About this RNA
An RNA of 177 nucleotides, treated with 2A3 and DMS and read out base by base. For 2A3 the reverse transcriptase was SuperScript II with manganese. DMS adducts were read by reverse transcription with MarathonRT. The 2A3 profile rests on 508 reads.

RNA sequence: GGGAACGACUCGAGUAGAGUCGAAAAAGCUCAUCAGCGGUGAAUGUGAGUUUGUGUGUUACUUGUGAAAGUUCCGACAAUUACAACCACCCAAUCAAUAAUAGAAAAGGGGAGAAGAAACUCCUAACCACUCAACUAUGUUCGCAUAGUUGAGUGGAAAAGAAACAACAACAACAAC
Reactivity to 2A3 in 0.01 (KOAc 150mM, MgCl2 10mM, bicine 150mM(pH8.5), 24C), signal-to-noise 1, nucleotides 027 to 126: a000g010c000u030c000a120u110c110a060g150c140g170g120u040g080a110a180u120g000u010g110a140g030u000u150u070g030u030g030u000g030u070u040a100c000u040u000g040u010g100a210a030a000g000u030u060c080c000g000a000c030a010a010u060u010a000c000a040a000c030c040a000c030c050c010a020a060u060c010a060a130u170a180a030u080a110g110a000a130a080a040g290g030g000g000a070g070a210a030g040a020a090a020c010u010c010c040u030a050a040
Reactivity to DMS in 0.01 (KOAc 150mM, MgCl2 10mM, bicine 150mM(pH8.5), 24C), signal-to-noise 1, nucleotides 027 to 126: a000g070c020u020c050a050u020c100a100g040c110g020g050u000g000a180a110u000g000u000g000a070g010u000u030u000g030u000g000u010g010u010u000a020c020u010u000g000u000g000a100a050a180g000u000u020c070c050g020a020c080a060a020u000u000a010c040a110a060c170c030a090c000c030c030a060a100u040c120a070a070u010a140a090u000a100g000a060a030a100a080g000g000g050g000a060g010a160a140g020a020a090a060c120u000c000c020u000a060a220
Conditions: 150 mM KOAc, 10 mM MgCl2 and 150 mM bicine (pH 8.5), 24 C.